[RMDB]
RNA sequence: GGGAACGACUCGAGUAGAGUCGAAAAUAAUAUGCAUAUCGAGUUCGCAUGUAUUUUCGUAGCCCUGCGGCUGUAACAUUACAGCUUAGUAAGAAUGCUACCUAACGAUAGCUAGCCGCAGGAUUAAGACAGGAUACUUCUUCGGAAGUAUCCUGUCAAAAGAAACAACAACAACAAC
Reactivity to DMS in 0.01 (KOAc 150mM, MgCl2 10mM, bicine 150mM(pH8.5), 24C), signal-to-noise 2, nucleotides 027 to 126: u000a100a020u010a020u010g020c000a130u000a300u030c150g000a130g000u010u010c160g010c000a000u000g010u000a020u000u000u000u000c030g000u000a140g020c110c010c000u020g000c010g020g020c010u000g010u010a040a090c160a120u010u000a000c010a180g010c160u000u010a100g010u000a030a040g010a050a090u000g000c000u000a020c020c000u000a110a190c250g010a050u000a010g010c010u000a040g000c000c000g000c000a020g010g010a050u000u000a040a120
Reactivity to 2A3 in 0.01 (KOAc 150mM, MgCl2 10mM, bicine 150mM(pH8.5), 24C), signal-to-noise 2, nucleotides 027 to 126: u030a000a050u110a000u020g000c020a000u100a110u300c180g100a070g200u200u200c050g000c000a010u020g030u060a010u020u060u010u000c090g040u060a030g040c010c000c000u000g000c000g010g000c000u000g070u130a060a030c050a120u000u080a020c020a010g130c100u010u050a020g000u010a070a000g080a120a080u120g000c020u030a000c010c010u110a200a050c030g080a090u030a010g000c080u000a000g000c000c000g000c000a000g000g000a000u040u060a010a000
About this RNA
Chemical mapping of a 177-nucleotide RNA with DMS and 2A3. The RNA was probed in 150 mM KOAc, 10 mM MgCl2 and 150 mM bicine (pH 8.5) at 24 C. The DMS profile rests on 1,474 reads. For 2A3, 1,114 sequencing reads were counted. 2A3 adducts were read by reverse transcription with SuperScript II with manganese. Source: RMDB library M2PK90, as collected in RNAgym.